[RMDB]
This 177-nucleotide RNA was probed chemically with DMS. Conditions: 150 mM KOAc, 10 mM MgCl2 and 150 mM bicine (pH 8.5), 24 C. Reactivities are given for positions 27 through 126.
RNA sequence: GGGAACGACUCGAGUAGAGUCGAAAAAUUACGGGCGGCGCAGGUGGAGCUGCGAUCCCUCCGCCCUUCGCGUGCUCUCUCGGUGGCCCAGACGCUGCAAACGGACAGGCGGGCCACCUGCAACGAAUCACGCAGUGGUAUUCGUACCACUGCGUGAAAAAGAAACAACAACAACAAC
Reactivity to DMS in 0.01 (KOAc 150mM, MgCl2 10mM, bicine 150mM(pH8.5), 24C), signal-to-noise 2, nucleotides 027 to 126: a090u000u020a080c110g000g000g010c020g020g020c080g020c240a050g010g040u020g020g000a140g030c000u000g000c060g010a070u010c030c020c000u030c020c010g000c020c010c020u000u020c010g000c080g000u000g000c030u000c120u000c070u000c180g020g020u030g000g020c030c010c010a120g020a160c100g000c010u010g000c040a100a100a130c300g030g010a180c000a050g010g020c070g000g000g000c010c000a020c000c000u010g020c060a110a080c080g000a030a090